Notes:
An RNA of 207 nucleotides, treated with 2A3 and read out base by base. The reactions ran in a buffer of 150 mM KOAc, 10 mM MgCl2 and 150 mM bicine (pH 8.5), at 24 C.
[RMDB]
RNA sequence: GGGAACGACUCGAGUAGAGUCGAAAAGAAAGAAAGAAAGAAACCGUCUCUGCUAGUCUCACGGUAACCACGUUGAAGUCGCAACGAAAGAAGCUCGCACUCAACUUCAACGGCUUAACGAGUGCAAAAAACUUACUGAUCUUCGGAUCAGUAAGAAGUUAACUGAGGUGUUCGCACCUCAGUUAACAAAAGAAACAACAACAACAAC
Reactivity to 2A3 in 0.01 (KOAc 150mM, MgCl2 10mM, bicine 150mM(pH8.5), 24C), signal-to-noise 2, nucleotides 027 to 156: g030a030a120a010g060a040a110a020g040a040a140a060g070a110a080a020c040c000g020u000c020u000c000u050g060c050u050a020g030u050c040u040c070a070c040g040g020u030a040a030c000c000a010c000g010u000u020g000a010a010g010u050c030g010c080a030a060c060g070a060a050a080g040a040a020g080c100u170c170g030c050a000c000u020c000a040a050c010u020u000c020a040a010c010g030g030c010u080u030a070a000c080g000a010g020u030g000c050a000a130a000a000a000a000c000u000u000a000c000u000g000a000u010c010u010u040c160g100g000a000u000c000a010g000u000a000a000g000a000a000

About this RNA: For 2A3, 1,694 sequencing reads were counted.